[RMDB]
RNA sequence: GGGAACGACUCGAGUAGAGUCGAAAAUCUAGGGUUCCGCAUGUCAAUUGACAUGGACUGGUCCGAGAGAAAACAAAUACGCGUAAAUAGAAGCGCGUAUGCACACGGAGGGAAAAAAGCCCGGGAGAAUGGGAUUAUUAGUUCGCUAAUAAUCCAAUCCUAUAUACUGCUUCGGCAGUAUAUAGGAAAAAGAAACAACAACAACAAC
Reactivity to DMS in 0.01 (KOAc 150mM, MgCl2 10mM, bicine 150mM(pH8.5), 24C), signal-to-noise 1, nucleotides 027 to 156: u000c000u000a060g030g000g050u000u000c030c000g060c000a010u000g020u030c000a290a190u000u010g020a000c010a010u000g000g000a200c030u010g010g020u020c020c000g030a160g000a140g010a140a070a030a070c080a110a130a000u000a020c000g000c000g000u000a020a210a110u000a290g000a300a300g000c000g000c000g010u010a030u010g020c120a160c080a030c030g040g000a180g070g000g000a000a120a110a060a080a210g010c050c050c020g030g010g000a150g000a090a050u000g030g000g000a030u010u000a030u000u000a000g000u000u000c300g040c010u030a010a040u000a030a010u000c000c030a070a050
Reactivity to 2A3 in 0.01 (KOAc 150mM, MgCl2 10mM, bicine 150mM(pH8.5), 24C), signal-to-noise 2, nucleotides 027 to 156: u000c010u010a020g000g040g000u000u000c000c000g030c010a000u000g000u010c010a170a300u200u300g000a010c000a000u010g020g030a060c000u090g000g000u000c000c000g000a000g000a010g010a010a030a000a000c020a010a070a000u010a000c020g050c010g010u070a010a220a100u210a300g150a300a060g010c010g000c000g000u000a020u010g000c040a000c000a000c050g010g000a000g010g020g000a000a230a080a050a040a110g010c010c020c000g020g060g010a020g010a040a060u190g080g010g000a000u000u010a010u000u010a020g010u060u010c110g040c140u010a000a000u010a010a000u010c000c000a000a010
An RNA of 207 nucleotides, treated with DMS and 2A3 and read out base by base. Source: RMDB library M2RFPK, as collected in RNAgym. The 2A3 profile rests on 660 reads. 2A3 adducts were read by reverse transcription with SuperScript II with manganese.